[RMDB]
Structure probing data (2A3 and DMS) for a 177-nucleotide construct. For DMS the reverse transcriptase was MarathonRT. Conditions: 150 mM KOAc, 10 mM MgCl2 and 150 mM bicine (pH 8.5), 24 C. For 2A3, 8,107 sequencing reads were counted. For 2A3 the reverse transcriptase was SuperScript II with manganese.
RNA sequence: GGGAACGACUCGAGUAGAGUCGAAAAGAUAUGGAUCCAGAACUACUUCGAUUCCGAAGAACUAAAUCGGAAACGAUUUAGGGAGGGGAAGCUGGAUCCUAAGUCAAAACUCCAGUUCGCUGGAGAAGGUGGAUAAUAUGUUCGCAUAUUAUCCACCAAAAGAAACAACAACAACAAC
Reactivity to 2A3 in 0.01 (KOAc 150mM, MgCl2 10mM, bicine 150mM(pH8.5), 24C), signal-to-noise 5, nucleotides 027 to 126: g010a000u030a000u080g000g000a000u010c000c000a020g030a190a180c150u280a110c040u210u150c070g300a300u300u090c070c030g170a260a040g000a070a000c010u010a010a000a010u010c000g020g020a030a010a010c000g000a000u000u000u020a000g000g040g010a020g010g190g050g040a020a010g050c000u000g000g000a010u000c010c000u010a000a000g000u000c000a010a000a110a190c000u000c010c010a000g020u100u130c300g020c120u000g000g000a030g010a030a050
Reactivity to DMS in 0.01 (KOAc 150mM, MgCl2 10mM, bicine 150mM(pH8.5), 24C), signal-to-noise 2, nucleotides 027 to 126: g020a030u000a210u000g000g010a020u010c000c000a010g000a080a140c140u010a210c010u000u010c030g030a300u030u000c080c020g000a080a130g020a180a300c020u010a010a020a000u010c000g000g000a030a030a050c010g010a010u000u000u000a010g000g000g000a050g020g010g000g000a080a080g000c010u000g020g000a000u000c000c000u000a000a070g000u010c020a090a060a090a110c010u000c000c000a000g000u010u000c270g000c000u000g010g000a000g010a020a080